[RMDB]
RNA sequence: GGGAACGACUCGAGUAGAGUCGAAAAGAUAUGGAACCUAAGGCCGAUAAGAAACACUCGGAAACGAGUGAUUUCUUUUGACGGCUAUGGUUCCUAAGUCAAAGGUUUAGUGUUCGCACUAAACCAAUCUUAGUGAGUUGUUCGCAACUCACUAAGAAAAAGAAACAACAACAACAAC
Reactivity to DMS in 0.01 (KOAc 150mM, MgCl2 10mM, bicine 150mM(pH8.5), 24C), signal-to-noise 2, nucleotides 027 to 126: g000a030u010a300u000g010g000a000a000c000c010u020a210a270g000g010c000c000g010a200u010a020a010g000a010a020a030c000a010c000u000c010g010g000a070a050a130c010g010a010g010u000g020a080u000u000u000c000u000u010u000u030g010a170c110g020g000c010u000a190u000g010g000u000u000c000c000u000a000a060g000u000c030a110a110a130g020g000u000u000u000a020g020u000g000u000u020c280g020c010a010c000u000a000a010a010c000c010a020a000
Reactivity to 2A3 in 0.01 (KOAc 150mM, MgCl2 10mM, bicine 150mM(pH8.5), 24C), signal-to-noise 2, nucleotides 027 to 126: g010a000u030a010u120g000g010a010a010c010c000u040a160a240g120g000c030c020g140a270u140a300a000g000a020a020a000c000a000c010u000c000g010g000a050a030a020c020g010a010g000u000g000a020u000u000u010c000u000u070u030u170g220a060c020g000g000c000u010a010u010g000g000u000u000c000c010u010a060a000g020u000c100a140a140a160g000g010u010u000u000a010g000u020g090u130u150c300g020c100a000c020u000a020a000a010c000c020a000a020